[RMDB]
RNA sequence: GGGAACGACUCGAGUAGAGUCGAAAAGGCAUGCUGGCGGCAUACGCAGUGCUGCAGGCCGUCGAGGGGGUCGGUUUGUGGCUGCUGAAGCGCUGGGGCGAGUACUUCGCGGUGGUGGCCACCUCAACACUUCCAUGCAAUUCGUUGCAUGGAAGUGAAAAGAAACAACAACAACAAC
Reactivity to 2A3 in 0.01 (KOAc 150mM, MgCl2 10mM, bicine 150mM(pH8.5), 24C), signal-to-noise 5, nucleotides 027 to 126: g050g020c010a010u100g030c030u060g060g030c010g020g030c020a050u110a150c100g020c040a030g040u060g110c030u020g000c000a010g040g000c000c020g030u070c050g060a120g020g020g020g000g010u030c040g010g010u060u040u090g020u010g030g000c010u030g000c010u030g040a060a030g060c020g000c100u070g020g000g010g010c070g010a020g020u050a100c020u050u050c040g000c040g050g050u090g010g040u010g000g020c020c000a030c010c000u060c030a060a090
Reactivity to DMS in 0.01 (KOAc 150mM, MgCl2 10mM, bicine 150mM(pH8.5), 24C), signal-to-noise 3, nucleotides 027 to 126: g000g000c020a080u040g000c010u000g010g020c020g000g020c050a070u000a180c160g010c050a060g020u030g000c040u010g000c040a070g000g020c020c060g020u000c040g010a090g060g020g010g010g000u020c060g000g020u020u040u000g030u000g000g020c020u030g000c030u000g030a160a210g000c030g020c060u000g020g010g010g000c060g010a070g040u030a070c090u000u000c020g010c000g000g010u090g000g020u000g000g010c000c030a060c030c030u000c090a100a180
Record summary
Chemical mapping of a 177-nucleotide RNA with 2A3 and DMS. For DMS the reverse transcriptase was MarathonRT. Conditions: 150 mM KOAc, 10 mM MgCl2 and 150 mM bicine (pH 8.5), 24 C. For 2A3, 5,212 sequencing reads were counted. Source: RMDB library OK1LIB, as collected in RNAgym.